[RMDB]
RNA sequence: GGGAACGACUCGAGUAGAGUCGAAAACUCUUUCAUUUAAUCUUCACAACUCGAUGAGGGGCAAUAUAUCUCCAGUUCACAGGCAAAGAAAUGGAGGCUGUAAGAGGUUAUGUGACCUCCGUCACACGACAUGGCACAUGUUCGCAUGUGCCAUGUCAAAAGAAACAACAACAACAAC
Reactivity to DMS in 0.01 (KOAc 150mM, MgCl2 10mM, bicine 150mM(pH8.5), 24C), signal-to-noise 2, nucleotides 027 to 126: c010u000c020u010u000u000c050a050u000u010u000a110a220u000c010u000u000c080a070c090a140a130c120u000c140g000a170u000g010a060g010g020g000g030c240a030a060u000a070u000a100u010c040u000c010c010a030g000u000u000c020a020c190a130g000g000c240a050a050a050g010a010a010a050u010g010g000a040g040g030c220u000g000u030a070a070g000a100g020g000u000u000a020u010g000u000g000a030c040c070u010c040c080g000u000c040a100c090a100c180
Reactivity to 2A3 in 0.01 (KOAc 150mM, MgCl2 10mM, bicine 150mM(pH8.5), 24C), signal-to-noise 2, nucleotides 027 to 126: c010u000c000u010u090u030c010a090u080u090u130a040a040u000c030u100u000c030a030c050a170a180c070u080c110g110a150u030g000a030g020g000g000g030c010a090a020u060a010u010a030u130c020u000c000c030a030g020u060u030c030a040c060a120g130g070c060a250a100a020g010a010a040a010u030g000g000a010g020g020c060u030g010u050a060a000g020a030g050g010u060u050a080u130g120u060g040a080c000c020u070c040c070g050u010c000a020c000a010c100